[RMDB]
RNA sequence: GGGAACGACUCGAGUAGAGUCGAAAAACGGCUGCAGUUACGACUGCAGCCGAACAGUGCCUGGCACAUAGGAGCUUCAUAAAUGUGUGUUGAUUUAUUUAUUGAUCUCCAAUGCCUAGCACUGUAACAUCUAACUUUCGUUCGCGAAAGUUAGAUGAAAAGAAACAACAACAACAAC
Reactivity to 2A3 in 0.01 (KOAc 150mM, MgCl2 10mM, bicine 150mM(pH8.5), 24C), signal-to-noise 9, nucleotides 027 to 126: a000c020g000g000c000u000g000c000a010g000u040u080a090c250g020a010c140u000g010c000a000g000c000c000g000a000a010c000a000g000u000g000c000c010u020g000g000c000a050c020a060u170a150g000g000a010g010c090u030u020c000a000u010a020a020a020u080g070u030g070u050g180u230u130g160a220u110u150u190a030u010u020u000a040u050u210g010a010u010c000u000c000c000a010a030u030g000c000c000u000a000g000c000a000c000u000g000u010a000a010
Reactivity to DMS in 0.01 (KOAc 150mM, MgCl2 10mM, bicine 150mM(pH8.5), 24C), signal-to-noise 3, nucleotides 027 to 126: a110c020g000g010c000u000g010c000a000g020u000u040a130c210g020a070c000u000g000c010a000g050c000c000g000a010a010c010a010g010u000g020c010c020u000g000g000c000a060c280a080u000a210g010g010a010g000c160u020u000c030a020u000a010a000a020u000g000u020g020u010g010u020u020g000a070u020u000u030a000u010u000u000a020u020u010g000a010u000c010u000c000c000a090a110u030g000c000c000u000a170g010c000a000c010u000g000u000a080a140